The record gives the reactivity of an RNA of 177 nucleotides to 2A3 and DMS.
Conditions: 150 mM KOAc, 10 mM MgCl2 and 150 mM bicine (pH 8.5), 24 C.
It was measured as part of the RMDB library M2PK50.
For DMS the reverse transcriptase was MarathonRT.
[RMDB]
RNA sequence: GGGAACGACUCGAGUAGAGUCGAAAAGCGCCCCUUUUCGAAGGGGCGCACUGGAAAUAAAGCCGAAAGGCUAGGCAUUCCUUAUUUGGCGAAAGCCUGCCUCUAUUGAGAUCUUCGGAUCUCAAAAUGUAUGCCGUAAAUUCGUUUACGGCAUACAAAAAGAAACAACAACAACAAC
Reactivity to 2A3 in 0.01 (KOAc 150mM, MgCl2 10mM, bicine 150mM(pH8.5), 24C), signal-to-noise 1, nucleotides 027 to 126: g020c000g000c000c000c000c000u020u010u070u060c190g140a010a000g000g000g010g010c040g000c000a000c010u010g000g090a020a030a080u110a040a100a020g000c000c020g040a140a030a020g010g010c000u020a020g000g000c010a020u000u060c010c000u030u140a180u160u160u120g020g000c040g050a060a010a000g020c000c000u020g020c000c020u060c030u090a210u060u050g000a000g000a000u000c000u040u050c230g090g000a020u000c000u030c000a000a030a010a000
Reactivity to DMS in 0.01 (KOAc 150mM, MgCl2 10mM, bicine 150mM(pH8.5), 24C), signal-to-noise 2, nucleotides 027 to 126: g010c000g030c000c000c000c000u010u000u010u020c170g030a020a000g000g040g000g020c030g020c000a000c070u000g010g000a060a040a050u030a060a090a060g020c000c000g010a140a060a140g010g030c000u000a030g000g050c110a100u000u000c020c000u000u010a170u010u000u000g000g020c010g000a060a050a150g000c000c010u000g000c030c000u000c160u000a190u000u000g000a020g000a020u000c000u000u030c240g020g000a000u000c000u000c000a000a000a100a050